[RMDB]
RNA sequence: GGGAACGACUCGAGUAGAGUCGAAAAUGGAAAAUUGCUACCAGUCCAGCGGCGGAUGAGAACGCCAGACCAAAACCGGUUGGCUUUUGGGUAAGCUUUGGUCUGCAGUUUGUGAACGUCAAAAUUAACCCCAGUAUGGUUUCGACCAUACUGGGGUAAAAGAAACAACAACAACAAC
Reactivity to DMS in 0.01 (KOAc 150mM, MgCl2 10mM, bicine 150mM(pH8.5), 24C), signal-to-noise 2, nucleotides 027 to 126: u010g000g000a060a050a060a060u000u000g000c010u030a120c000c000a070g040u020c040c020a060g000c140g000g000c000g000g000a030u050g000a210g010a150a080c110g010c250c000a100g030a080c000c030a020a020a060a060c050c060g000g000u040u040g000g000c130u000u000u000u000g000g000g010u000a090a030g020c020u000u020u000g000g000u000c030u010g010c070a100g000u000u000u010g000u000g030a050a080c160g000u030c050a050a020a040a100u000u030a080
Reactivity to 2A3 in 0.01 (KOAc 150mM, MgCl2 10mM, bicine 150mM(pH8.5), 24C), signal-to-noise 2, nucleotides 027 to 126: u040g020g060a080a080a000a050u100u090g040c040u030a040c000c000a010g000u040c000c030a000g000c000g080g000c070g000g070a080u120g090a110g030a160a000c040g000c020c030a040g070a000c010c000a050a080a000a040c110c030g150g040u040u130g120g010c060u080u030u000u030g150g020g020u090a080a010g000c000u040u020u050g020g000u040c040u030g000c050a040g000u000u050u070g220u070g080a010a010c020g120u110c070a060a040a120a020u060u170a020